[RMDB]
RNA sequence: GGGAACGACUCGAGUAGAGUCGAAAAGUUUUUUGAACCAAUUGUCGUGGCACAAAGUUUGGCGCUUGCUGGCAUCACUGCAACCCAUGCGACAAAACAAUAUGGGGAGCUGACUGGAUACGCCCUGACGGAAUUAAUACUUCGGUAUUAAUUCCGUAAAAGAAACAACAACAACAAC
Reactivity to 2A3 in 0.01 (KOAc 150mM, MgCl2 10mM, bicine 150mM(pH8.5), 24C), signal-to-noise 2, nucleotides 027 to 126: g020u090u010u070u050u140u200g050a040a030c020c000a010a040u050u050g040u040c030g000u040g050g010c050a020c040a120a140a090g040u070u090u070g140g000c060g000c050u020u080g000c010u020g080g010c010a060u090c010a030c040u040g000c000a000a060c020c000c020a010u030g070c020g050a070c000a050a120a010a010c060a050a040u170a090u130g010g020g000g010a020g030c030u020g060a070c010u010g030g020a040u040a120c050g010c020c020c020u030g040
Reactivity to DMS in 0.01 (KOAc 150mM, MgCl2 10mM, bicine 150mM(pH8.5), 24C), signal-to-noise 4, nucleotides 027 to 126: g010u000u000u000u000u000u010g020a210a130c030c020a060a090u010u010g030u010c050g050u010g000g020c080a090c080a070a110a130g000u000u010u000g010g000c060g020c080u000u000g010c060u010g000g000c060a060u010c110a100c120u000g020c040a070a170c050c020c020a020u010g000c130g020a080c120a040a050a050a090c100a040a110u000a050u000g000g010g010g010a240g000c070u000g000a070c070u000g000g000a150u000a080c140g010c020c000c050u010g000